[RMDB]
RNA sequence: GGGAACGACUCGAGUAGAGUCGAAAAAAGUCGACAGAUAUGGGGGUGUAGCCGUGGCAAUAAGGCCACUGGGGUGAGUAAAGAAAUGCACUCGCCUCCCACACUUGGAAAGGUGAUCAUGUCUCAAAUCGCAUAGCGAAUUCGUUCGCUAUGCGAUAAAAGAAACAACAACAACAAC
Reactivity to 2A3 in 0.01 (KOAc 150mM, MgCl2 10mM, bicine 150mM(pH8.5), 24C), signal-to-noise 3, nucleotides 027 to 126: a000a000g170u100c050g000a060c000a050g080a020u060a080u140g000g010g020g000g020u060g070u080a030g040c020c020g010u020g020g000c000a060a150u150a270a050g130g000c000c010a000c040u050g000g000g000g010u050g050a030g010u040a010a080a090g080a020a150a040u110g020c020a000c020u000c010g030c000c000u050c010c010c000a050c000a020c010u000u030g050g070a120a050a000g050g010u020g020a060u080c050a080u050g020u000c010u000c010a140a180
Reactivity to DMS in 0.01 (KOAc 150mM, MgCl2 10mM, bicine 150mM(pH8.5), 24C), signal-to-noise 3, nucleotides 027 to 126: a030a120g050u040c030g010a080c020a030g020a050u020a040u020g020g020g000g020g010u000g020u020a120g040c080c040g020u000g000g020c000a110a090u030a210a070g010g000c000c020a010c060u040g030g000g020g030u000g000a000g000u010a080a220a020g010a070a010a080u000g060c300a000c010u000c000g000c000c000u010c010c030c070a190c060a020c010u000u010g020g010a050a140a030g020g010u000g000a050u020c090a110u000g010u000c020u000c090a050a070
Source: RMDB libraries RFM100 and RFMREP, as collected in RNAgym. An RNA of 177 nucleotides, treated with 2A3 and DMS and read out base by base. Reactivities are given for positions 27 through 126. The reactions ran in a buffer of 150 mM KOAc, 10 mM MgCl2 and 150 mM bicine (pH 8.5), at 24 C. For 2A3, 2,442 sequencing reads were counted.